[RMDB]
RNA sequence: GGGAACGACUCGAGUAGAGUCGAAAAGUUGGUGAGCGGAUAAGGUCCUGAACAGAUGCCCUCCGGGCGUCCACGGCUGACGGUUGAUUCCUCCUCCUGACUGAGUGCACAAGGCCCGCUUGGUUGACUCAAUGUUGUUGUUCGCAACAACAUUGAGAAAAGAAACAACAACAACAAC
Reactivity to DMS in 0.01 (KOAc 150mM, MgCl2 10mM, bicine 150mM(pH8.5), 24C), signal-to-noise 1, nucleotides 027 to 126: g020u000u000g030g030u000g030a070g050c300g000g030a030u000a050a070g000g000u010c010c060u020g010a090a080c190a120g000a030u000g010c030c030c050u020c260c190g030g010g010c060g000u000c030c010a110c140g010g000c020u000g010a090c120g000g000u000u000g000a130u010u000c000c000u000c070c030u000c020c030u020g000a050c000u000g010a060g000u000g010c030a030c040a070a080g020g010c020c020c010g010c050u000u000g000g010u000u000g020a170